Structure probing data (2A3 and DMS) for a 177-nucleotide construct.
2A3 adducts were read by reverse transcription with SuperScript II with manganese.
For DMS the reverse transcriptase was MarathonRT.
RNA sequence: GGGAACGACUCGAGUAGAGUCGAAAACACCCACGCGGAGCACAUGCCGCGGAAUAGGCAAAAGUGUUGCGGACCUGCGUAGUUUCGAAAAGCGGACGGCCACGACGGCCCUUUGGGUGGGGUUGCACAAUGCCCACUUAUUCGUAAGUGGGCAUUGAAAAGAAACAACAACAACAAC
Reactivity to 2A3 in 0.01 (KOAc 150mM, MgCl2 10mM, bicine 150mM(pH8.5), 24C), signal-to-noise 3, nucleotides 027 to 126: c080a060c020c000c020a000c000g000c010g020g010a040g040c050a030c020a180u170g010c010c000g000c000g000g010a020a100u140a050g020g000c040a060a030a050a060g070u080g040u060u140g050c040g000g060a080c000c000u040g020c040g060u100a050g060u050u040u170c060g040a030a020a070a080g030c010g040g030a070c070g010g000c000c010a030c030g090a020c060g030g030c010c000c020u050u030u110g070g010g010u060g000g020g000g030u060u140g000c020a010
Reactivity to DMS in 0.01 (KOAc 150mM, MgCl2 10mM, bicine 150mM(pH8.5), 24C), signal-to-noise 4, nucleotides 027 to 126: c140a120c010c000c010a120c020g000c000g010g000a080g000c130a100c220a110u030g020c000c010g010c020g000g000a110a090u020a060g010g000c020a040a060a090a120g020u000g000u020u010g010c060g000g010a090c010c000u040g000c030g030u040a080g020u000u000u020c110g000a090a050a080a200g000c030g000g000a070c090g000g010c050c010a050c070g000a150c170g010g010c020c010c030u010u000u010g010g000g040u000g000g000g000g020u020u020g000c110a170